[RMDB]
RNA sequence: GGGAACGACUCGAGUAGAGUCGAAAAGAUAUGGAGAACGAAGACAGCACUACCCACCUCCUGUGUCGGAAACGACACUGGAGAGGUGUCGAGUUCUCCUAAGUCAAACGCGACGUUCGCGUCGCGAGUCUGAUCGGUAGUUCGCUACCGAUCAGACAAAAGAAACAACAACAACAAC
Reactivity to 2A3 in 0.01 (KOAc 150mM, MgCl2 10mM, bicine 150mM(pH8.5), 24C), signal-to-noise 2, nucleotides 027 to 126: g020a000u040a010u110g000g000a030g020a000a010c020g020a260a030g000a020c010a020g210c140a120c300u270a210c130c040c000a050c020c020u000c010c010u000g000u010g000u000c000g000g000a030a010a030c020g000a000c010a010c010u020g020g030a010g030a040g110g100u150g000u060c010g010a030g010u000u020c010u030c010c000u020a020a000g000u000c030a080a050a100c020g000c000g020a000c000g000u080u190c300g000c010g150u010c000g000c010g040a020
Reactivity to DMS in 0.01 (KOAc 150mM, MgCl2 10mM, bicine 150mM(pH8.5), 24C), signal-to-noise 2, nucleotides 027 to 126: g000a000u010a180u010g000g000a000g000a030a010c010g010a200a170g000a110c060a150g050c140a160c180u010a180c080c070c050a300c100c020u010c000c010u000g010u010g010u000c000g010g020a030a010a040c010g010a000c020a000c010u010g000g010a020g060a050g010g010u000g010u010c000g000a260g010u000u000c000u000c020c000u010a020a020g000u020c010a050a070a200c000g010c020g040a010c020g030u000u000c230g080c000g000u000c030g010c000g040a080